Chemical mapping of a 177-nucleotide RNA with 2A3.
RNA sequence: GGGAACGACUCGAGUAGAGUCGAAAAGUACCAAGUGGUAUGUGGGACUGCUCCGCGACUAAAGCGGAUAGACUGAGACAUCUCUCUUGGGGAGAACCUGUAUUGGGUACAACUGUUCCCCACCCACUGGUCGCGGUCAAUUCGUUGACCGCGACCAAAAAGAAACAACAACAACAAC
Reactivity to 2A3 in 0.01 (KOAc 150mM, MgCl2 10mM, bicine 150mM(pH8.5), 24C), signal-to-noise 1, nucleotides 027 to 126: g100u000a010c000c010a090a000g000u000g050g010u040a110u040g000u000g000g000g100a040c000u060g010c000u000c000c000g000c000g040a150c300u300a300a000a000g000c000g050g000a000u080a000g030a010c050u000g150a130g060a030c280a230u000c000u000c000u020c080u060u060g110g000g000g000a060g010a130a110c000c000u010g060u290a300u170u260g000g150g000u050a000c080a080a080c120u280g060u110u090c000c000c000c000a000c000c040c000a040c000

Values are in units of 0.01, from 0 to 300, in steps of 10. For 2A3, 280 sequencing reads were counted.